[RMDB]
RNA sequence: GGGAACGACUCGAGUAGAGUCGAAAACAGUAUUCGUACUGACACCUUCCUAAGUCUACCGUAACACUACUAAGACAGGCAAGUAGAUCGGAAACGAUCUAUGAUGACCUCGAGUAGUGGAUAAGGUAGAUAUGGAUAAAAGUCCAUUCGUGGACAAUAUUGCAUAGACGUUCGCGUCUAUGCAAUAAAAAGAAACAACAACAACAAC
Reactivity to 2A3 in 0.01 (KOAc 150mM, MgCl2 10mM, bicine 150mM(pH8.5), 24C), signal-to-noise 5, nucleotides 027 to 156: c010a000g000u020a020u110u300c300g040u100a020c020u030g060a070c030a130c100c020u030u010c010c010u060a120a080g000u000c000u000a000c010c000g010u010a040a020c000a000c000u010a000c000u020a120a090g050a090c040a020g010g000c010a050a040g000u000a000g000a000u000c010g000g050a080a040a030c010g000a000u000c000u000a000u010g030a030u200g140a210c000c000u020c030g020a000g000u000a000g000u010g000g000a000u010a010a000g000g020u000a000g000a000u000a000u020g000g000a010u120a120a110a030a030g010u000c010c000a030u080u140c270g120u080g000g000a010c020a010a050
Reactivity to DMS in 0.01 (KOAc 150mM, MgCl2 10mM, bicine 150mM(pH8.5), 24C), signal-to-noise 2, nucleotides 027 to 156: c000a060g050u010a030u000u000c180g100u000a100c000u040g000a190c040a130c030c040u000u000c010c000u000a120a300g040u000c010u000a000c000c020g030u010a100a300c020a010c000u000a030c010u010a210a230g050a100c220a060g070g000c000a210a300g010u000a000g000a010u000c010g000g010a130a160a300c000g020a010u000c010u000a020u000g000a160u010g010a180c020c010u000c030g020a110g000u000a010g030u000g030g040a060u000a020a140g000g000u010a000g010a010u000a030u010g040g000a110u000a070a160a120a120g010u000c000c000a090u000u000c160g000u000g000g000a020c020a130a270
This 207-nucleotide RNA was probed chemically with 2A3 and DMS. It was measured as part of the RMDB library RNAMAK. For DMS the reverse transcriptase was MarathonRT. For 2A3 the reverse transcriptase was SuperScript II with manganese. The reactions ran in a buffer of 150 mM KOAc, 10 mM MgCl2 and 150 mM bicine (pH 8.5), at 24 C. Reactivities are given for positions 27 through 156.